The record gives the reactivity of an RNA of 207 nucleotides to 2A3. 2A3 adducts were read by reverse transcription with SuperScript II with manganese. Conditions: 150 mM KOAc, 10 mM MgCl2 and 150 mM bicine (pH 8.5), 24 C.

[RMDB]
RNA sequence: GGGAACGACUCGAGUAGAGUCGAAAACGCAAAGCUGCAGCGCGGCGCUCUGGAGGCCUUGCCCCGCGCACUGCUCUUUACAUGGCCCGACGUGAAGGCACUUCGCGGGCAGUGCUGCGGCCUCGUGAAACUGCCCCUAAGUUCGCUUAGGGGCAAAUCUGACACUUACUUUCGAGUAAGUGUCAGAAAAAGAAACAACAACAACAAC
Reactivity to 2A3 in 0.01 (KOAc 150mM, MgCl2 10mM, bicine 150mM(pH8.5), 24C), signal-to-noise 1, nucleotides 027 to 156: c060g010c040a030a080a000g000c000u000g000c000a020g050c010g000c040g120g030c050g060c040u030c040u130g210g070a110g050g000c000c030u050u060g020c030c020c030c000g000c000g010c020a020c000u010g000c000u020c000u180u030u030a030c030a100u140g060g070c010c060c040g090a080c060g000u020g010a010a000g000g000c010a020c060u040u020c050g000c010g050g000g000c020a020g010u040g020c000u010g000c000g000g000c000c000u000c040g020u030g020a100a040a040c070u010g010c000c000c000c000u010a000a000g000u010u060c170g070c140u000u000a010g020g010g000g000c000a000a000a000